[RMDB]
RNA sequence: GGGAACGACUCGAGUAGAGUCGAAAAAUCAAAACUAUGACCACUAAUCACAUAGAAAAUCAUACCGGCCAAACUUGCACACUGGCUCUUUAUCCACCAGCUCUGAGUAUAGCGGACUUCCUGUAAUCAACUGUGAGUGAAAUAGCAGAUCAAAGAGGUUAUAGGCAAUGUUCGCAUUGCCUAUAACAAAAGAAACAACAACAACAAC
Reactivity to 2A3 in 0.01 (KOAc 150mM, MgCl2 10mM, bicine 150mM(pH8.5), 24C), signal-to-noise 4, nucleotides 027 to 156: a000u100c040a040a020a010a040c030u040a050u090g060a050c040c010a060c110u140a080a060u100c030a020c020a090u040a080g070a050a160a040a040u150c050a050u050a120c010c040g020g010c020c000a080a050a020c060u040u090g020c020a010c010a020c040u020g040g000c000u040c000u040u080u060a070u030c020c010a020c020c010a030g020c010u000c010u040g030a020g030u060a050u050a130g060c040g020g030a050c010u070u040c020c010u030g050u120a050a080u070c020a010a140c020u020g020u060g070a030g060u070g030a010a030a040u040a030g020c030a020g010a060u080c050a020a090a030g130a030g150
Reactivity to DMS in 0.01 (KOAc 150mM, MgCl2 10mM, bicine 150mM(pH8.5), 24C), signal-to-noise 2, nucleotides 027 to 156: a140u010c060a060a140a090a090c050u000a060u010g000a170c020c030a170c070u020a100a140u000c140a070c050a090u000a140g000a120a080a020a120u000c030a050u000a050c070c060g020g010c070c030a050a060a040c030u000u000g000c030a070c090a100c060u020g000g040c030u000c090u000u010u000a090u020c010c060a080c030c040a060g010c040u000c040u000g000a100g020u000a090u000a050g040c000g010g000a070c030u010u010c020c000u000g040u000a060a030u000c030a030a120c080u000g050u000g020a090g010u000g000a060a040a130u000a070g000c040a020g030a070u000c020a020a070a120g010a180g010